[RMDB]
RNA sequence: GGGAACGACUCGAGUAGAGUCGAAAAUGUUCAGAACCCUCAGAACAUGUGGUCUGCUAGAGCAACAGUUCGCUAUGGGAUAGGGUCCCGUAGGGGCACAGAAGACACAAGAGGCAAUUAAAGACAAGUAUACUGAACUAUUCGUAGUUCAGUAUACAAAAGAAACAACAACAACAAC
Reactivity to 2A3 in 0.01 (KOAc 150mM, MgCl2 10mM, bicine 150mM(pH8.5), 24C), signal-to-noise 5, nucleotides 027 to 126: u050g000u030u050c010a010g090a220a170c090c010c020u020c050a110g050a140a090c040a090u100g030u050g060g110u020c020u050g050c050u080a060g010a020g160c030a020a080c020a050g020u070u040c060g010c140u020a020u030g020g000g020a020u060a120g300g040g110u010c000c010c010g000u010a010g010g030g010g000c020a020c000a050g110a070a010g040a010c010a000c010a040a060g010a010g040g000c030a040a040u130u090a180a040a030g050a030c020a090a040
Reactivity to DMS in 0.01 (KOAc 150mM, MgCl2 10mM, bicine 150mM(pH8.5), 24C), signal-to-noise 7, nucleotides 027 to 126: u000g010u000u000c040a090g000a090a130c140c020c020u000c090a140g010a100a060c090a070u000g010u000g010g000u010c030u010g000c070u010a100g020a100g010c110a080a080c110a070g010u000u010c050g010c010u000a030u000g000g010g000a060u000a130g020g030g010u000c000c010c020g040u000a030g010g000g000g010c040a080c080a060g000a070a050g010a050c080a030c060a070a060g010a070g000g010c070a050a070u000u010a050a070a090g010a070c180a060a120